[RMDB]
RNA sequence: GGGAACGACUCGAGUAGAGUCGAAAAGGUUUCAUUACCGCGAAUGAAUCUAAGGCCGAAUAAGAAACGCGUAGCUUUAGCGAAGUUAUCCGAGAACUUACCGAUAAGAUCGCUAGGUAAGCUCAUCUUAGCAUCAAUAGUCAUAUUAUAUAAGCUAACACUUGUGAUAGUUCGCUAUCACAAGUGUAAAAGAAACAACAACAACAAC
Reactivity to 2A3 in 0.01 (KOAc 150mM, MgCl2 10mM, bicine 150mM(pH8.5), 24C), signal-to-noise 6, nucleotides 027 to 156: g030g000u010u020u060c040a040u060u090a100c040c040g030c030g040a020a060u050g010a020a010u030c040u040a090a080g070g030c040c030g040a080a070u160a140a020g100a030a060a020c050g010c040g040u050a020g000c010u050u050u070a010g000c030g020a020a020g030u040u040a030u070c100c070g030a030g040a140a070c050u040u050a030c030c000g050a060u060a090a090g060a100u050c030g010c070u020a010g030g030u030a010a020g010c010u020c020a070u010c020u050u050a010g000c020a030u050c040a080a190u060a080g040u050c030a050u040a080u240u120a090u070a040u040a120a020g020c000u020a050
Reactivity to DMS in 0.01 (KOAc 150mM, MgCl2 10mM, bicine 150mM(pH8.5), 24C), signal-to-noise 3, nucleotides 027 to 156: g010g020u000u000u020c070a080u010u000a080c040c070g040c070g010a100a090u000g000a110a090u010c050u020a080a110g030g020c030c020g000a070a120u010a080a120g000a100a100a090c130g030c060g020u010a120g020c040u000u010u000a060g020c030g010a130a130g000u000u000a050u010c050c040g010a160g010a050a090c100u010u000a070c020c010g010a120u000a060a090g020a130u000c100g010c040u000a090g000g000u000a030a100g000c020u000c040a270u000c040u000u000a060g000c060a120u000c060a070a110u000a080g010u000c030a070u000a100u000u010a120u010a110u000a080a070g000c030u000a100
Structure probing data (2A3 and DMS) for a 207-nucleotide construct. For 2A3, 4,299 sequencing reads were counted.